An RNA of 207 nucleotides, treated with DMS and 2A3 and read out base by base. The data come from the RNA Mapping Database (RMDB), library M2RFPK. Conditions: 150 mM KOAc, 10 mM MgCl2 and 150 mM bicine (pH 8.5), 24 C. DMS adducts were read by reverse transcription with MarathonRT. For 2A3 the reverse transcriptase was SuperScript II with manganese. Values cover nucleotides 27 to 156.

RNA sequence: GGGAACGACUCGAGUAGAGUCGAAAAUUACUCUUGUUAGGUGAGAGUUGAUGGUCGCCGAGCCAGUCCGUACAUCCAAAAAGGACUCUAUGUAGUAGGAAGUCGAGAGCCUAUGAGAGUUAGAGUCAUGCCUAUUUUGUGUUCGCACAAAAUAGAACAGUUUCUAGUGGUUCGCCACUAGAAACUGAAAAGAAACAACAACAACAAC
Reactivity to DMS in 0.01 (KOAc 150mM, MgCl2 10mM, bicine 150mM(pH8.5), 24C), signal-to-noise 2, nucleotides 027 to 156: u000u000a060c020u000c060u010u000g020u000u010a090g000g000u000g000a060g010a100g020u000u010g020a070u010g000g020u010c030g060c030c060g010a090g030c040c040a090g020u000c020c050g040u010a060c060a150u000c020c040a030a070a130a110a190g050g010a020c010u000c030u010a020u000g000u010a230g060u010a060g010g010a050a120g010u000c120g010a190g000a130g000c090c000u000a040u000g000a240g010a120g010u000u010a030g000a040g020u000c050a100u000g000c040c010u000a020u000u000u000u000g040u000g000u000u020c300g010c000a020c000a010a000a000a020u000a020g000a060a100
Reactivity to 2A3 in 0.01 (KOAc 150mM, MgCl2 10mM, bicine 150mM(pH8.5), 24C), signal-to-noise 3, nucleotides 027 to 156: u110u050a020c010u010c000u010u030g070u100u140a110g010g040u080g030a030g000a010g030u040u090g040a080u080g020g040u030c050g020c130c030g030a020g020c020c010a020g050u030c020c020g010u050a060c020a130u040c030c010a040a120a050a010a050g070g010a010c000u000c010u020a030u060g060u020a030g000u010a010g030g010a070a020g040u100c120g020a030g010a010g190c000c000u020a030u020g040a060g030a020g080u020u060a010g000a000g010u020c040a030u080g040c000c000u000a000u000u000u000u000g020u000g030u030u060c180g030c090a000c000a000a000a010a010u000a010g020a030a040
High DMS reactivity at an A or C suggests that its Watson-Crick edge is free.